[RMDB]
RNA sequence: GGGAACGACUCGAGUAGAGUCGAAAAGGCAAGAUCUUCCUUUGCGCCUAUCUCAUGUAUGGGGGAAGCUCAGGGGGAGAAGACCGUUUAUUGCCCGGGUGAGGAGCAGUGGUAUAAGAUUGCCGACCAUACCGUUAGCGUUCGCGCUAACGGUAUGAAAAGAAACAACAACAACAAC
Reactivity to 2A3 in 0.01 (KOAc 150mM, MgCl2 10mM, bicine 150mM(pH8.5), 24C), signal-to-noise 3, nucleotides 027 to 126: g000g010c010a030a000g010a090u020c000u020u000c020c000u000u000u010g000c020g010c000c000u060a040u010c020u010c020a050u300g170u300a220u260g060g000g010g000g020a010a010g010c010u010c010a000g020g000g000g000g000a020g000a000a000g030a010c010c000g020u100u110u120a180u090u080g020c030c000c000g100g000g190u220g140a150g020g030a120g030c010a000g000u070g120g070u120a180u040a180a110g080a170u020u040g020c000c000g000a020c010
Reactivity to DMS in 0.01 (KOAc 150mM, MgCl2 10mM, bicine 150mM(pH8.5), 24C), signal-to-noise 5, nucleotides 027 to 126: g000g000c010a030a040g000a080u000c010u000u000c000c000u000u000u000g010c250g000c010c010u000a220u010c010u000c000a060u010g020u010a120u000g010g000g000g000g010a170a300g000c010u010c020a020g010g000g010g000g000a020g010a020a070g000a190c010c010g020u010u010u010a070u020u000g000c000c020c060g040g010g020u010g010a130g000g000a090g020c030a040g010u000g010g000u000a090u000a060a130g000a140u000u000g010c000c020g000a130c160